An RNA of 207 nucleotides, treated with 2A3 and read out base by base.
Reactivities are given for positions 27 through 156.
RNA sequence: GGGAACGACUCGAGUAGAGUCGAAAAAGGAAAUGCCAUGUCAUGUAAGCCUGGGAGAGGUUUCCAAGAAGACAGUUAAUCUCCUAUCUCCCUUCAUCUAUCAAAUGGAGAGAUGAAGGAUUACCUUCAUACCAUUCUAAUGCUAUGGACUUUGAAACGCGUCCUCACCAUUCGUGGUGAGGACGCGAAAAGAAACAACAACAACAAC
Reactivity to 2A3 in 0.01 (KOAc 150mM, MgCl2 10mM, bicine 150mM(pH8.5), 24C), signal-to-noise 1, nucleotides 027 to 156: a000g020g010a040a040a010u110g020c040c010a100u070g000u020c040a060u050g030u040a070a090g030c000c000u090g000g010g020a160g000a000g050g030u000u000u120c010c000a020a000g170a000a000g000a010c010a000g000u010u070a300a040u050c010u000c020c020u040a070u140c030u010c020c090c000u080u030c000a010u000c020u100a020u050c020a060a200a300u300g090g000a070g030a000g000a060u020g010a040a100g010g000a000u000u250a060c000c000u020u020c040a060u100a070c050c000a040u040u130c120u260a130a170u110g000c040u050a030u000g020g010a170c050u070u060u070g080a090a110a020